An RNA of 177 nucleotides, treated with 2A3 and DMS and read out base by base.
DMS adducts were read by reverse transcription with MarathonRT.
For DMS, 2,073 sequencing reads were counted.

RNA sequence: GGGAACGACUCGAGUAGAGUCGAAAAGCUGGUCCGGCUUGGCCCCAGCGAACACUUGACGAACGGAUAGUCCCGUCUUGUGGAUUAGGACGUUCUAGGUCCGGUCUGCCCCCUAGUUCGUCCGAAACCAGGCAUACCCUUUCGAGGGUAUGCCUGGAAAAGAAACAACAACAACAAC
Reactivity to 2A3 in 0.01 (KOAc 150mM, MgCl2 10mM, bicine 150mM(pH8.5), 24C), signal-to-noise 3, nucleotides 027 to 126: g000c000u010g000g040u160c090c030g010g060c090u120u160g160g090c000c040c000c010a010g110c010g040a060a000c030a010c020u030u060g020a000c010g000a120a030c020g020g060a120u120a120g070u190c040c030c010g010u000c000u020u010g020u050g000g030a030u070u200a030g000g000a000c000g000u020u000c000u000a010g000g000u150c160c000g000g020u050c090u180g120c000c000c000c000c020u000a000g000u000u010c030g000u000c000c000g000a030a000a000
Reactivity to DMS in 0.01 (KOAc 150mM, MgCl2 10mM, bicine 150mM(pH8.5), 24C), signal-to-noise 2, nucleotides 027 to 126: g000c000u000g020g000u040c090c040g000g000c060u020u080g000g040c150c020c000c170a080g000c040g020a110a070c030a010c020u010u040g010a000c000g000a060a020c080g000g030a110u040a300g000u030c270c010c000g050u020c030u000u010g000u000g010g000a120u050u030a100g000g050a000c000g020u000u000c000u000a000g000g020u010c150c270g000g080u000c120u040g010c020c030c110c000c000u000a000g010u000u000c000g000u000c030c010g000a030a070a080
Source: RMDB library OK1LIB, as collected in RNAgym.